[RMDB]
Structure probing data (DMS and 2A3) for a 170-nucleotide construct. Reactivities are rounded to 0.1 and cut off at 0 and 3. For DMS the reverse transcriptase was MarathonRT. The RNA was probed in 150 mM KOAc, 10 mM MgCl2 and 150 mM bicine (pH 8.5) at 24 C. Values cover nucleotides 27 to 129.
RNA sequence: GGGAACGACUCGAGUAGAGUCGAAAAUGCAUGUUUCUUGGUACAUUAUGUUCGGGCCUAUCGUUCCCAUAUGGAUGACCUGCGUCUAUACAGUUGCAAUGUGCUUUAGACACUUCUUCUGGGUUUUGAACGCGGAAGUUCGCUUCCGCGAAAAGAAACAACAACAACAAC
Reactivity to DMS in 0.01 (KOAc 150mM, MgCl2 10mM, bicine 150mM(pH8.5), 24C), signal-to-noise 4, nucleotides 027 to 129: u080g010c170a100u050g040u000u020u030c020u010u000g030g160u100a060c070a000u020u120a080u120g040u060u010c060g000g020g040c190c050u020a090u020c050g040u020u020c000c000c000a160u040a010u080g000g060a100u030g050a090c190c030u070g000c050g000u020c000u030a050u060a000c000a070g010u010u010g000c180a030a070u030g010u000g020c060u000u000u000a060g010a150c090a060c000u000u000c040u000u020c040u010g020g000g010u000u000u000u000g020a110a100
Reactivity to 2A3 in 0.01 (KOAc 150mM, MgCl2 10mM, bicine 150mM(pH8.5), 24C), signal-to-noise 2, nucleotides 027 to 129: u080g000c040a070u040g010u020u030u020c010u000u040g040g040u080a050c000a040u050u190a100u140g130u030u020c050g010g010g070c000c000u030a040u070c000g000u000u040c000c010c000a000u020a030u060g120g030a040u050g020a020c040c020u020g000c010g030u000c020u010a140u020a050c030a020g040u060u060g020c000a010a080u090g000u000g020c000u000u050u150a050g030a050c010a000c000u060u090c000u010u000c060u050g060g000g100u000u010u090u050g050a040a000